The data come from the RNA Mapping Database (RMDB), library M2PK90. Structure probing data (DMS) for a 177-nucleotide construct. Reactivities are given for positions 27 through 126. DMS adducts were read by reverse transcription with MarathonRT.

[RMDB]
RNA sequence: GGGAACGACUCGAGUAGAGUCGAAAAACAGAGCGAAGGGGGGACGGAGAAGGCUAUGUUGGCCGGGCGACGGUUGUCCCGGUUUAAGCGUGUAGGCUGGUUUUGCAGGCAAAUCCGGAAAAAGAAAUGAUACCACCUCAUUCGUGAGGUGGUAUCAAAAAGAAACAACAACAACAAC
Reactivity to DMS in 0.01 (KOAc 150mM, MgCl2 10mM, bicine 150mM(pH8.5), 24C), signal-to-noise 1, nucleotides 027 to 126: a070c040a050g060a020g060c050g030a000a120g000g000g030g000g010g000a060c060g020g000a090g000a130a050g010g020c070u000a050u000g030u010u000g000g000c010c000g030g010g000c300g030a090c220g010g030u010u020g000u000c010c000c000g000g000u010u020u000a060a020g000c040g010u000g030u020a050g020g010c020u000g000g010u000u000u000u020g000c060a090g010g010c100a090a070a050u040c030c040g020g020a070a080a070a040a070g010a040a010a170